[RMDB]
RNA sequence: GGGAACGACUCGAGUAGAGUCGAAAAAUUGGCUUCAACAUGUUGCUCAUGUUUUACCGAGCUAUCAUUUGCGUAAACUAGGUGUAGAUAUUGCUUCAAAUCAUCAUAUCAAUUUAAUAUCAUUUGCCAGCACUAUAACAUUCGUGUUAUAGUGCUGAAAAGAAACAACAACAACAAC
Reactivity to DMS in 0.01 (KOAc 150mM, MgCl2 10mM, bicine 150mM(pH8.5), 24C), signal-to-noise 7, nucleotides 027 to 126: a110u010u000g000g020c050u000u010c090a070a070c070a060u000g010u000u010g010c100u010c040a050u000g000u000u010u000u010a090c120c060g010a070g010c050u010a050u010c080a110u000u000u000g010c130g010u000a050a060a080c080u000a060g010g020u000g010u000a100g010a080u000a060u010u010g010c070u000u000c070a030a080a080u010c080a050u000c040a040u000a060u000c050a040a070u010u010u000a060a070u000a090u010c070a100u000u000u010g030c230
Reactivity to 2A3 in 0.01 (KOAc 150mM, MgCl2 10mM, bicine 150mM(pH8.5), 24C), signal-to-noise 7, nucleotides 027 to 126: a000u100u070g010g000c010u090u070c020a040a020c010a080u060g020u070u110g050c020u030c100a020u040g160u030u090u060u070a050c050c040g010a010g000c020u030a020u130c020a050u020u070u140g070c050g050u100a050a080a060c030u020a060g060g040u030g030u070a010g030a070u040a050u070u100g020c020u050u030c020a050a040a090u060c040a030u020c010a020u060a030u140c030a070a080u070u140u190a180a100u120a040u150c080a100u060u050u090g080c040